Conditions: 150 mM KOAc, 10 mM MgCl2 and 150 mM bicine (pH 8.5), 24 C. Chemical mapping of a 207-nucleotide RNA with 2A3. The 2A3 profile rests on 444 reads. Source: RMDB library OK3TST, as collected in RNAgym.
RNA sequence: GGGAACGACUCGAGUAGAGUCGAAAAAGACAACCUCUUAUGAAAAGCUGGCAAGAAAUAUAUUAACUUCAACUGAAGAAAAAGAUAAAAUUGAUAAGUACUGUGUGACAUAUUACUUUUCUUGACAGCACUAAGGAUGGUGAUUAUGAUACAGGUACUAAUUACGCGAGUUCGCUCGCGUAAUUAGAAAAGAAACAACAACAACAAC
Reactivity to 2A3 in 0.01 (KOAc 150mM, MgCl2 10mM, bicine 150mM(pH8.5), 24C), signal-to-noise 1, nucleotides 027 to 156: a000g040a000c000a020a020c000c000u000c000u030u110a090u100g050a100a190a120a050g000c000u000g010g000c000a020a000g040a000a020a000u160a000u050a000u000u170a110a030c020u020u010c070a100a070c120u230g020a020a020g040a010a140a090a000a000g120a020u170a220a070a060a030u040u020g050a040u100a170a000g000u000a120c080u030g070u070g040u070g280a030c020a030u060a040u000u000a030c050u050u000u000u000c000u000u000g000a000c000a000g010c020a000c000u070a030a000g020g050a130u080g000g010u030g020a130u040u250a100u230g100a080u030a080c120a030g160g020u130a000